[RMDB]
RNA sequence: GGGAACGACUCGAGUAGAGUCGAAAAGAUAUGGAUUUCGCGAUAAGUCGGCAUCGGAAACGAUGUGCGACUUUUGACGCGAUGUCCUAAGUCAAAACUCUAUGUGAACUUCGGUUCACAUAGAGAAUCUACAAGUCCUGUUCGCAGGACUUGUAGAAAAAGAAACAACAACAACAAC
Reactivity to DMS in 0.01 (KOAc 150mM, MgCl2 10mM, bicine 150mM(pH8.5), 24C), signal-to-noise 2, nucleotides 027 to 126: g000a010u000a300u020g000g000a030u000u010u000c000g040c000g040a110u000a040a020g030u000c010g000g000c000a000u000c000g010g000a080a060a120c000g020a010u000g010u020g040c000g020a010c000u000u000u000u000g020a210c040g010c000g000a030u000g000u010c000c000u000a040a140g000u020c050a090a070a100a170c000u000c000u000a000u020g010u000g000a020a000c000u000u000c200g040g010u000u000c000a000c000a000u000a000g000a000g010a020a020
Reactivity to 2A3 in 0.01 (KOAc 150mM, MgCl2 10mM, bicine 150mM(pH8.5), 24C), signal-to-noise 1, nucleotides 027 to 126: g040a010u010a040u080g000g010a000u020u010u030c000g000c000g020a040u040a290a080g030u040c020g000g010c010a000u000c030g010g000a060a030a000c010g000a000u000g000u130g170c060g000a030c030u030u030u010u030g000a010c020g020c000g000a000u010g000u000c000c000u000a050a010g050u020c020a000a020a130a230c000u040c000u000a000u000g010u010g000a020a000c010u020u100c300g080g000u000u000c000a000c010a000u000a000g010a000g000a010a020